[RMDB]
RNA sequence: GGGAACGACUCGAGUAGAGUCGAAAAGAUAUGGAGCCCUAUCUUUGGGCUGAUGACCAACAGUUGACCGUAUUUCGGAAACGAAAUACGGUCAACUGUUGCAAGGCCGAUAGUGGCUCCUAAGUCACAUGUUUAUGUUGUUCGCAACAUAAACAUGAAAAGAAACAACAACAACAAC
Reactivity to DMS in 0.01 (KOAc 150mM, MgCl2 10mM, bicine 150mM(pH8.5), 24C), signal-to-noise 2, nucleotides 027 to 126: g030a050u010a300u010g000g000a010g000c000c000c000u000a020u000c010u010u020u010g060g040g010c000u000g010a040u020g010a190c300c010a010a020c000a000g000u000u000g020a040c000c030g040u000a030u010u000u020c000g030g000a090a050a160c010g030a020a010a020u010a010c000g010g000u000c000a000a000c020u000g000u000u000g000c020a040a090g000g030c010c000g000a030u000a010g010u010g070g020c000u000c000c010u000a000a080g010u000c040a300
An RNA of 177 nucleotides, treated with DMS and read out base by base. For DMS, 2,963 sequencing reads were counted. It was measured as part of the RMDB library TTRINS. For DMS the reverse transcriptase was MarathonRT.